Notes:
This 177-nucleotide RNA was probed chemically with 2A3 and DMS. Values cover nucleotides 27 to 126. For 2A3, 2,671 sequencing reads were counted.
RNA sequence: GGGAACGACUCGAGUAGAGUCGAAAAUGCGGUCUUGAUCAUCCUGCUGAAGCGCAUACACCGUAAUGACCUGGUGGAAAGGAUCCCUAGCGGCACCCGUGACGGUGGCCAAACGUCAAAUCAGCCAAAGGUAGUGUGUAUUCGUACACACUACCUUAAAAGAAACAACAACAACAAC
Reactivity to 2A3 in 0.01 (KOAc 150mM, MgCl2 10mM, bicine 150mM(pH8.5), 24C), signal-to-noise 2, nucleotides 027 to 126: u090g000c020g030g000u050c010u070u140g040a060u070c040a050u010c060c050u030g030c020u060g070a050a010g040c050g040c040a000u050a100c020a010c030c010g070u080a080a100u130g080a080c030c070u050g020g000u030g060g080a110a050a040g080g000a070u060c010c000c000u050a030g020c050g030g020c010a030c000c030c030g050u040g040a060c040g040g020u010g040g010c000c010a080a090a000c020g030u020c020a000a000a130u060c040a040g040c020c030a060
Reactivity to DMS in 0.01 (KOAc 150mM, MgCl2 10mM, bicine 150mM(pH8.5), 24C), signal-to-noise 5, nucleotides 027 to 126: u000g040c060g010g020u000c050u000u010g010a100u010c050a080u010c030c030u000g010c050u000g020a070a100g010c080g010c050a050u000a140c070a060c030c030g010u010a080a100u000g010a110c090c060u000g000g030u010g000g000a050a080a110g010g000a100u000c020c020c010u000a100g020c070g010g020c050a090c050c020c050g030u000g000a050c060g020g010u010g020g000c030c060a030a070a060c050g000u010c050a030a100a090u000c080a090g010c040c160a090